Annotation: An RNA of 177 nucleotides, treated with 2A3 and read out base by base. For 2A3, 702 sequencing reads were counted. For 2A3 the reverse transcriptase was SuperScript II with manganese. It was measured as part of the RMDB library OK1LIB. Reactivities are given for positions 27 through 126.
[RMDB]
RNA sequence: GGGAACGACUCGAGUAGAGUCGAAAAAAACGUUGGUGAGCGCACUUUCCGGGCCUUCAUCAGCAGACACAUCACACCCUUGCUACCACCCAUGGGCCCUGAGCCAACUACAAGGUUGCAACAGCGUACCGAUCGGAUAGUUCGCUAUCCGAUCGGUAAAAGAAACAACAACAACAAC
Reactivity to 2A3 in 0.01 (KOAc 150mM, MgCl2 10mM, bicine 150mM(pH8.5), 24C), signal-to-noise 1, nucleotides 027 to 126: a010a010a000c100g010u010u000g000g000u080g000a050g010c030g030c030a000c160u010u170u090c000c000g030g070g010c000c020u040u130c010a110u000c000a010g060c010a000g120a030c140a000c000a100u140c010a000c000a050c020c070c000u010u050g050c030u030a000c000c000a100c060c000c000a040u050g000g000g190c050c000c000u000g000a050g030c010c010a000a030c000u060a040c050a050a050g110g000u040u000g020c000a080a010c010a110g060c000g070u000